[RMDB]
RNA sequence: GGGAACGACUCGAGUAGAGUCGAAAAGGGCCGUUCACUGGAUCCGAAGCCUCUAGAAGGAUAAUAUAGGCACUCCAUACCCUACUCCGAUUCAAUACGUCCCCGUCGUACAGAAUGGUAACAUAUCGAACACAACCUAACUUCGGUUAGGUUGUAAGCAUUCGUACAGUUUCGACUGUACGAAUGCAAAAGAAACAACAACAACAAC
Reactivity to 2A3 in 0.01 (KOAc 150mM, MgCl2 10mM, bicine 150mM(pH8.5), 24C), signal-to-noise 2, nucleotides 027 to 156: g050g000g000c080c070g000u130u050c040a010c040u070g010g050a000u100c000c100g030a040a050g020c070c000u100c070u110a200g120a210a110g090g020a070u100a250a000u130a040u120a150g020g020c060a050c060u050c050c000a030u030a130c000c000c000u020a020c040u010c000c050g040a020u100u050c010a100a050u020a140c020g010u010c020c000c000c000g120u180c020g030u030a040c010a020g050a050a120u100g060g090u090a070a000c010a110u160a120u210c100g020a020a010c000a000c000a050a000c010c000u000a000a000c000u010u060c070g050g000u000u000a000g000g010u000u000g000u010a000a000

The record gives the reactivity of an RNA of 207 nucleotides to 2A3. For 2A3 the reverse transcriptase was SuperScript II with manganese.